Structure probing data (2A3) for a 207-nucleotide construct. The data come from the RNA Mapping Database (RMDB), library RNAMAK. The RNA was probed in 150 mM KOAc, 10 mM MgCl2 and 150 mM bicine (pH 8.5) at 24 C.
[RMDB]
RNA sequence: GGGAACGACUCGAGUAGAGUCGAAAAAAAAAACGCUGGGAAUGUGUAGCAAUGGGUUAAGGGAGCUCCUCUGAAGCGCGCACGGAGGAGCGACGAUCUUAACCUGACUACCAUUCCUGUGCUGAAGCGCGCACGGCAACCGAAAGGUGCGAAAAAAGGUAUAUAUUAAGUUCGCUUAAUAUAUACCAAAAGAAACAACAACAACAAC
Reactivity to 2A3 in 0.01 (KOAc 150mM, MgCl2 10mM, bicine 150mM(pH8.5), 24C), signal-to-noise 1, nucleotides 027 to 156: a020a040a000a000a020a000c000g000c000u020g000g000g030a000a000u010g210u030g010u180a000g000c020a020a030u000g010g010g000u000u000a010a000g000g000g000a010g010c000u010c030c020u000c010u030g080a210a140g020c000g000c000g000c000a010c010g010g000a000g000g010a000g000c010g000a040c000g000a000u000c000u000u000a010a000c020c010u010g060a010c000u000a000c000c000a000u000u000c010c000u010g000u000g010c000u020g020a170a030g000c020g000c000g000c000a010c000g000g000c000a000a000c000c010g050a060a130a020g020g000u000g000c000g110a160a040a000a000a000a000